[RMDB]
RNA sequence: GGGAACGACUCGAGUAGAGUCGAAAAGGGGUCUGUGCCGCUUCGUAGUCUAAGCGACAUGCUGAAGCCUCCACGGCAACAGCGCUUAGGCAUAUAUACGAAUGCACAGACGGAGGCACCCAAAAUCAGACGUAACACUUCGGUGUUACGUCUGAAAGUCACCAAACGAGUUCGCUCGUUUGGUGACAAAAGAAACAACAACAACAAC
Reactivity to 2A3 in 0.01 (KOAc 150mM, MgCl2 10mM, bicine 150mM(pH8.5), 24C), signal-to-noise 2, nucleotides 027 to 156: g020g000g040g010u000c010u010g020u000g000c010c080g060c030u000u000c000g060u010a080g000u000c000u000a000a000g000c000g090a110c110a260u300g010c000u040g020a090a010g000c010c020u080c090c040a050c010g030g000c030a110a070c050a240g140c000g010c000u000u000a010g000g020c030a010u050a010u000a000u020a100c000g000a010a040u260g000c000a010c010a000g000a000c000g000g010a020g000g000c020a060c000c000c000a080a030a000a080u030c000a000g010a020c000g010u000a000a000c020a010c010u090u190c300g010g000u000g000u010u000a000c000g000u000c010u000g000a000a000a010